Structure probing data (2A3) for a 207-nucleotide construct.
For 2A3, 978 sequencing reads were counted.
2A3 adducts were read by reverse transcription with SuperScript II with manganese.
The RNA was probed in 150 mM KOAc, 10 mM MgCl2 and 150 mM bicine (pH 8.5) at 24 C.

RNA sequence: GGGAACGACUCGAGUAGAGUCGAAAAACGCGGAGUACGCUCCGCGACAACACUUCUUUCGACCCGCUAACCGAGACCUAUGGGUCGUUAAAUUACGACUCUAUCUUACUCACAUAACAUCGCACAAAAAACGUGGUUCGGUUCGCCGAACCACGAACAGUAACCAAACCUUCGGGUUUGGUUACUGAAAAGAAACAACAACAACAAC
Reactivity to 2A3 in 0.01 (KOAc 150mM, MgCl2 10mM, bicine 150mM(pH8.5), 24C), signal-to-noise 2, nucleotides 027 to 156: a000c000g000c000g000g020a010g000u080a020c200g030c050u000c000c000g120c010g030a000c020a140a000c020a030c100u110u060c030u040u160u010c030g000a020c030c000c030g040c130u050a070a080c060c030g020a010g040a050c010c010u040a090u150g010g000g020u000c000g000u000u040a080a120a060u240u130a030c010g000a000c000u020c040u050a090u100c050u120u070a120c040u090c060a080c000a100u190a200a010c010a110u140c110g010c140a040c090a080a050a020a000a050a080c040g000u000g000g000u020u000c010g000g010u050u020c110g000c000c000g000a000a000c040c000a000c000g000a050a010